[RMDB]
RNA sequence: GGGAACGACUCGAGUAGAGUCGAAAAAAGGGAAAUCAUAACCUUAGGUAUGUUGUAUAAACAUAACGGCAAACUAGUUAUAGCUAAGGUGUUUCACUACGUUAUAACUUAAAUUAAAGUGCCACAGCAAGCUACGUUAGUUCGCUAACGUAGCUUGAAAAGAAACAACAACAACAAC
Reactivity to 2A3 in 0.01 (KOAc 150mM, MgCl2 10mM, bicine 150mM(pH8.5), 24C), signal-to-noise 2, nucleotides 027 to 126: a000a000g090g000g040a000a060a190u170c030a030u060a130a080c030c000u070u030a050g120g070u090a060u030g010u000u030g070u020a080u110a120a060a020c030a010u060a090a040c080g000g000c010a060a010a080c040u030a020g010u000u010a010u020a010g020c020u060a230a300g000g000u080g130u010u240u300c040a010c000u000a000c020g000u010u000a000u000a030a010c010u000u060a050a040a090u160u140a030a030a020g110u020g020c000c020a000c000a010g050
Reactivity to DMS in 0.01 (KOAc 150mM, MgCl2 10mM, bicine 150mM(pH8.5), 24C), signal-to-noise 3, nucleotides 027 to 126: a040a040g020g000g000a100a140a110u000c300a100u010a090a220c000c000u010u000a090g010g010u010a010u000g000u000u010g000u000a120u020a010a030a000c040a030u020a010a060c110g020g000c030a050a110a070c160u000a020g000u000u000a010u010a000g000c010u000a080a190g010g020u000g000u010u000u020c020a030c020u000a190c110g000u010u010a000u000a010a010c010u020u000a020a040a120u020u010a020a090a040g010u000g020c030c010a110c300a070g000
An RNA of 177 nucleotides, treated with 2A3 and DMS and read out base by base. For DMS the reverse transcriptase was MarathonRT. The data come from the RNA Mapping Database (RMDB), library RFMREP. The RNA was probed in 150 mM KOAc, 10 mM MgCl2 and 150 mM bicine (pH 8.5) at 24 C.